The record gives the reactivity of an RNA of 207 nucleotides to 2A3. The 2A3 profile rests on 689 reads. The data come from the RNA Mapping Database (RMDB), library M2RFPK. The reactions ran in a buffer of 150 mM KOAc, 10 mM MgCl2 and 150 mM bicine (pH 8.5), at 24 C.
RNA sequence: GGGAACGACUCGAGUAGAGUCGAAAAACGCGGAGUACGCUCCGCGACAACACUUCUAUCGACCCGCUAACCGAGACCUAUGGGUCGUUAAAUUACGUCUCUAUCUUACUCACAUAACAUCGCACAAAAAACGUGGUUCGGUUCGCCGAACCACGAAGCUAUAUCGCACGUUCGCGUGCGAUAUAGCAAAAGAAACAACAACAACAAC
Reactivity to 2A3 in 0.01 (KOAc 150mM, MgCl2 10mM, bicine 150mM(pH8.5), 24C), signal-to-noise 2, nucleotides 027 to 156: a000c040g000c030g000g000a020g000u110a040c130g030c060u000c000c000g040c010g000a000c000a060a000c020a040c000u140u130c090u180a100u130c000g000a000c010c000c000g000c250u190a050a000c030c010g000a000g020a020c010c010u080a070u240g010g000g000u010c000g000u040u040a010a020a010u170u030a000c050g010u000c000u000c030u010a090u050c010u030u150a110c050u150c090a100c000a140u250a240a020c040a100u150c090g070c130a070c170a110a040a120a120a130a020c040g000u000g020g000u000u000c000g000g030u030u020c210g000c090c020g000a000a000c000c000a000c000g000a000a000